RNA sequence: GGGAACGACUCGAGUAGAGUCGAAAACGGAUGGGCCGCUUCCGGCGAACGAGCCCGAAGAGCGAGUGGGGGAGAACUCCCGAGAGUUGGGAGACAGAAAGAGGGCGAGUGAUCUCGGAAGGAAUCCUCUUCCCUAGAGUUUCGACUCUAGGGAAGAAAAAGAAACAACAACAACAAC
Reactivity to DMS in 0.01 (KOAc 150mM, MgCl2 10mM, bicine 150mM(pH8.5), 24C), signal-to-noise 1, nucleotides 027 to 126: c080g010g000a150u000g030g010g010c130c040g000c010u020u010c080c140g000g030c090g010a160a010c010g010a240g000c050c020c050g020a070a070g030a150g020c060g000a050g070u000g010g000g000g040g000a080g020a060a130c010u000c010c000c020g020a170g030a190g100u000u010g000g020g000a050g010a060c040a170g020a010a080a090g020a290g000g000g000c040g000a170g010u000g000a090u000c030u000c060g020g000a070a050g000g000a100a110u000c010c060
Conditions: 150 mM KOAc, 10 mM MgCl2 and 150 mM bicine (pH 8.5), 24 C. Chemical mapping of a 177-nucleotide RNA with DMS.